[RMDB]
RNA sequence: GGGAACGACUCGAGUAGAGUCGAAAAGGGGUCGACAAGAGGAUACCUUGGAUUUAGUUUGGAGGCACAACUGAAGCCUCCACGGUUGUGCUACCCACCCAAACUUGUCAGGUAUCUGGUGUCGACGGAGGCACCCAAACCAUCGUUCGCGAUGGAAGGUAUGUCAAAACUUCGGUUUUGACAUACCAAAAGAAACAACAACAACAAC
Reactivity to DMS in 0.01 (KOAc 150mM, MgCl2 10mM, bicine 150mM(pH8.5), 24C), signal-to-noise 1, nucleotides 027 to 156: g000g020g020g010u000c020g010a030c000a090a160g030a300g000g010a020u000a020c040c010u020u020g020g020a100u000u000u020a010g040u000u000u010g010g000a300g000g030c010a030c020a010a050c020u010g020a010a110g020c000c000u000c000c000a050c030g000g020u000u000g030u010g000c050u030a090c020c010c030a300c110c000c010a000a000a010c020u000u000g000u000c070a080g040g000u000a000u000c000u010g020g000u000g000u000c020g000a030c040g000g000a000g000g090c000a050c010c000c060a030a100a190c000c000a020u000c010g000u030u000c240g050c000g030a050u010g000g010a030a210
Reactivity to 2A3 in 0.01 (KOAc 150mM, MgCl2 10mM, bicine 150mM(pH8.5), 24C), signal-to-noise 2, nucleotides 027 to 156: g080g010g010g000u010c050g000a010c040a100a110g080a090g160g050a020u030a000c040c030u180u300g180g000a060u190u250u130a010g010u000u000u000g000g000a010g000g030c000a000c000a000a000c000u020g040a050a010g010c010c000u020c000c000a010c000g000g010u000u000g000u000g030c040u040a110c080c090c020a080c000c000c000a000a010a020c010u000u040g060u030c110a050g000g030u010a010u020c010u060g030g070u090g000u000c000g000a010c010g000g000a000g000g000c000a020c010c000c000a040a120a130c010c000a000u030c000g060u060u100c230g000c010g120a000u000g010g000a040a000
Source: RMDB library RNAMAK, as collected in RNAgym. The record gives the reactivity of an RNA of 207 nucleotides to DMS and 2A3. For DMS, 1,680 sequencing reads were counted. For 2A3 the reverse transcriptase was SuperScript II with manganese.